[RMDB]
The record gives the reactivity of an RNA of 207 nucleotides to 2A3 and DMS.
It was measured as part of the RMDB library M2RFOK.
For 2A3, 3,892 sequencing reads were counted.
For DMS, 2,803 sequencing reads were counted.
The reactions ran in a buffer of 150 mM KOAc, 10 mM MgCl2 and 150 mM bicine (pH 8.5), at 24 C.
RNA sequence: GGGAACGACUCGAGUAGAGUCGAAAAACUGACGGUACGCCGUCAGAAGGGUAGAAAAGAUGGUUUGAAAACCACGCCUUCUACCAAUAUAGUAAAUAAAUAGGCGGAGCGGUCAUACGUGACCGCAAAAACAUCCUUGGCUUCGGCCAAGGAUGAACAAGUGUAAACUGUUCGCAGUUUACACUUGAAAAGAAACAACAACAACAAC
Reactivity to 2A3 in 0.01 (KOAc 150mM, MgCl2 10mM, bicine 150mM(pH8.5), 24C), signal-to-noise 1, nucleotides 027 to 156: a000c000u000g000a000c000g000g000u050a030c190g020c060c010g000u000c000a000g010a010a000g010g000g000u010a010g010a010a000a010a010g050a300u030g010g050u030u100u200g100a110a120a000a000c000c000a000c000g000c000c010u000u010c000u000a010c000c000a010a000u170a010u050a020g100u060a030a020a130u080a040a070a030u100a030g010g000c010g010g020a000g010c000g000g010u000c000a010u050a130c200g060u030g000a000c000c000g000c000a000a000a000a040a000c000a000u010c000c000u000u000g000g010c000u070u000c130g070g000c000c000a000a000g000g000a000u000g000a000a010
Reactivity to DMS in 0.01 (KOAc 150mM, MgCl2 10mM, bicine 150mM(pH8.5), 24C), signal-to-noise 1, nucleotides 027 to 156: a150c000u010g000a000c040g030g030u000a080c230g090c000c010g000u000c020a010g000a000a090g010g000g010u030a040g000a030a020a020a010g010a060u010g020g020u000u010u000g020a210a070a210a080c000c010a020c000g000c020c000u000u000c000u000a000c010c000a100a160u020a090u010a130g020u020a050a120a070u010a090a110a180u000a140g020g000c040g000g000a230g020c000g030g000u000c020a020u000a030c130g050u000g020a140c000c000g070c000a000a010a030a110a060c000a000u000c010c010u000u000g000g030c020u000u000c300g040g010c020c000a000a040g010g020a000u000g010a040a100